[RMDB]
RNA sequence: GGGAACGACUCGAGUAGAGUCGAAAAGAAAACCAUUGACUACGGCCUUCUACGCAUGUACAAAGCGAGUGAAGGUUUUUGCUAUCUCAAUCAUUUAUGGUUUAUUUGCUUGACAGGCGGUUUAAACCGCCUGUCCCUUCUUCGGAAGGGACAGGCGAAAAGAAACAACAACAACAAC
Reactivity to 2A3 in 0.01 (KOAc 150mM, MgCl2 10mM, bicine 150mM(pH8.5), 24C), signal-to-noise 4, nucleotides 027 to 126: g020a000a040a010a010c010c010a020u030u070g050a040c020u050a020c100g020g000c000c000u040u020c000u030a030c020g020c020a060u110g040u100a100c110a050a120a020g000c010g000a020g090u080g000a010a000g010g010u000u000u000u010u010g000c010u070a030u070c010u000c060a110a100u040c020a060u030u110u140a090u070g030g020u040u030u010a060u040u050u100g020c020u040u010g030a040c020a050g000g040c010g030g030u030u060u070a010a030a010c020
Reactivity to DMS in 0.01 (KOAc 150mM, MgCl2 10mM, bicine 150mM(pH8.5), 24C), signal-to-noise 9, nucleotides 027 to 126: g000a100a050a050a070c020c010a070u000u000g000a060c090u000a070c150g010g010c010c000u000u000c030u000a200c010g020c040a060u010g010u020a100c250a090a110a100g000c000g000a130g010u000g000a020a020g000g010u000u000u000u010u000g020c130u000a050u000c080u000c050a060a050u010c120a070u010u010u000a050u010g010g010u000u000u000a050u010u010u000g010c050u000u000g010a090c190a080g000g010c020g010g010u000u010u000a030a080a090c100